[RMDB]
The record gives the reactivity of an RNA of 207 nucleotides to DMS and 2A3. DMS adducts were read by reverse transcription with MarathonRT. Conditions: 150 mM KOAc, 10 mM MgCl2 and 150 mM bicine (pH 8.5), 24 C. For 2A3 the reverse transcriptase was SuperScript II with manganese. The DMS profile rests on 2,232 reads.

RNA sequence: GGGAACGACUCGAGUAGAGUCGAAAAACGGCGAGUACGCUCGCCGAAGCUCGGUGCGGCGUGCCUAAAUAGUGCCUUAGGCCGCACGCGUUAUGCAUAGGUGGCAAGACCAGCUACGGCUGGUCAAAAAACAAGUAUACCUUCGGGUAUACUUGAAUCUAAUUGGAGUGUUCGCACUCCAAUUAGAAAAAGAAACAACAACAACAAC
Reactivity to DMS in 0.01 (KOAc 150mM, MgCl2 10mM, bicine 150mM(pH8.5), 24C), signal-to-noise 1, nucleotides 027 to 156: a080c020g000g000c010g000a050g030u010a030c300g060c040u000c000g020c010c000g010a010a040g000c040u000c080g000g010u020g050c030g000g060c000g050u010g000c020c010u010a050a050a230u000a110g010u000g000c060c220u000u010a040g050g040c030c030g030c020a060c020g020c030g030u000u000a100u000g040c040a110u000a160g000g010u020g020g000c020a110a090g020a000c000c010a000g000c000u000a050c230g050g000c020u010g020g010u010c010a000a000a050a040a020a030c000a000a010g000u000a010u000a000c000c000u000u000c300g010g000g020u010a010u000a010c010u000u000g010a070a180
Reactivity to 2A3 in 0.01 (KOAc 150mM, MgCl2 10mM, bicine 150mM(pH8.5), 24C), signal-to-noise 1, nucleotides 027 to 156: a010c010g010g000c000g000a040g010u040a010c300g030c140u000c020g010c000c050g010a010a000g000c030u060c040g130g010u100g000c000g000g020c000g050u100g000c000c000u050a080a090a090u300a060g100u200g050c000c000u000u020a070g010g020c010c000g030c000a110c020g020c010g020u070u110a070u150g030c060a030u050a120g130g000u050g030g010c000a080a000g000a000c000c000a000g000c000u020a060c180g080g000c020u000g020g010u010c040a000a010a010a010a010a010c010a000a000g000u000a000u000a000c020c000u000u020c090g060g030g000u000a000u000a000c000u000u000g000a000a050